RNA sequence: GGGAACGACUCGAGUAGAGUCGAAAAGCCGUAAACGCAUCCGGCGAAUAAGAUGCAUGAGCGAAAGCUCUAAGAUAAUUGGCCGUUUCGUAGGGGCCGUAGAGCCUACUUAUUAAUGCUCGAGACGUGUGGAGCGAUCAUCACGCAAGACUAACAAGGCUAAUUAUACCUUCGGGUAUAAUUAGCCAAAAGAAACAACAACAACAAC
Reactivity to 2A3 in 0.01 (KOAc 150mM, MgCl2 10mM, bicine 150mM(pH8.5), 24C), signal-to-noise 1, nucleotides 027 to 156: g000c000c000g080u070a050a130a190c280g000c040a070u060c040c000g020g000c030g030a090a050u130a170a080g020a000u100g000c040a000u030g030a000g030c050g010a120a000a000g010c000u000c000u020a080a030g000a080u030a120a020u090u050g060g000c020c020g040u020u030u030c030g010u070a050g040g000g000g000c000c000g000u070a030g080a010g030c010c010u100a170c010u150u050a030u020u120a140a050u140g040c040u010c060g000a030g000a010c010g010u050g020u010g030g100a030g030c010g040a080u000c010a010u030c000a090c060g000c110a070a040g040a220c030u060a060a000c030a110a000
Reactivity to DMS in 0.01 (KOAc 150mM, MgCl2 10mM, bicine 150mM(pH8.5), 24C), signal-to-noise 1, nucleotides 027 to 156: g050c030c000g000u000a080a230a100c060g000c030a100u010c040c010g000g040c040g080a080a110u010a080a080g000a110u030g050c000a070u010g000a120g010c000g000a080a100a170g000c000u000c000u000a060a110g000a200u010a080a080u010u020g000g010c040c050g020u000u000u000c040g050u000a140g020g000g000g060c000c030g030u010a070g000a070g030c000c030u000a060c060u000u000a060u000u010a030a140u000g000c000u030c010g030a070g000a060c020g040u010g020u010g000g010a050g000c070g000a140u000c020a090u000c050a030c040g060c010a000a050g010a300c050u030a040a050c010a120a250

An RNA of 207 nucleotides, treated with 2A3 and DMS and read out base by base. The data come from the RNA Mapping Database (RMDB), library OK3TST. Reactivities are given for positions 27 through 156. For DMS, 1,440 sequencing reads were counted. The 2A3 profile rests on 365 reads. Conditions: 150 mM KOAc, 10 mM MgCl2 and 150 mM bicine (pH 8.5), 24 C.